[RMDB]
RNA sequence: GGGAACGACUCGAGUAGAGUCGAAAAGAUAUGGAGAGAGGCGGAUCGUAACUUCAACAGCCGUACCGCUAUUCGGAAACGAAUAUGUACGGACAUGAAGGAGAAGAUCCGCCUCUCUCCUAAGUCAUCUAUGUGGACUGUUCGCAGUCCACAUAGAAAAAGAAACAACAACAACAAC
Reactivity to DMS in 0.01 (KOAc 150mM, MgCl2 10mM, bicine 150mM(pH8.5), 24C), signal-to-noise 1, nucleotides 027 to 126: g020a000u000a300u000g000g000a030g020a020g010a030g000g030c000g010g000a010u000c010g010u000a170a300c010u000u000c000a010a080c300a140g000c030c000g010u000a000c010c000g000c010u000a010u000u020c000g010g000a080a180a300c000g010a010a000u000a000u000g000u000a000c000g000g060a080c230a090u010g000a020a000g020g000a090g000a110a120g010a010u000c000c000g000c000c000u000c000u000c000u010c000c010u000a000a100g000u000c040a080